[RMDB]
RNA sequence: GGGAACGACUCGAGUAGAGUCGAAAAGAAUGUAAGAGCGUAAUCGCGCCUUGACGUGAGUGAGACAAGACAGAACGCUAUCCAAAGUAAGAUAGCAUAGCUCACAAUACGCUGAUCUGUCCUAGAACGAUCAUCGUACUUUCGAGUACGAUGAUCGAAAAGAAACAACAACAACAAC
Reactivity to 2A3 in 0.01 (KOAc 150mM, MgCl2 10mM, bicine 150mM(pH8.5), 24C), signal-to-noise 3, nucleotides 027 to 126: g060a000a050u180g000u200a070a050g030a000g040c000g010u020a080a100u110c000g000c000g000c030c130u100u160g070a130c030g010u020g030a020g020u010g010a000g010a050c080a170a070g030a000c020a040g090a060a020c050g020c000u000a000u000c020c030a220a020a000g120u100a100a060g060a000u000a000g000c000a000u050a060g010c000u000c000a000c010a000a030u010a010c000g000c000u040g050a130u020c040u070g070u030c010c000u040a050g010a120a000
Reactivity to DMS in 0.01 (KOAc 150mM, MgCl2 10mM, bicine 150mM(pH8.5), 24C), signal-to-noise 3, nucleotides 027 to 126: g050a080a040u000g020u010a030a080g000a060g000c000g020u000a070a300u000c040g030c040g000c000c140u060u030g010a060c010g000u000g000a100g000u010g000a060g000a140c170a050a110g030a080c300a100g000a090a090c150g020c000u000a010u000c000c140a100a060a100g010u050a130a160g010a000u000a000g000c000a140u000a070g000c010u010c050a000c030a090a170u000a000c020g010c000u000g040a140u020c000u000g000u000c010c060u000a110g030a040a130
Notes: This 177-nucleotide RNA was probed chemically with 2A3 and DMS. For 2A3, 3,414 sequencing reads were counted. 2A3 adducts were read by reverse transcription with SuperScript II with manganese. In probing experiments dimethyl sulfate is read out at A N1 and C N3, which are open when not base-paired. It was measured as part of the RMDB library OK1LIB.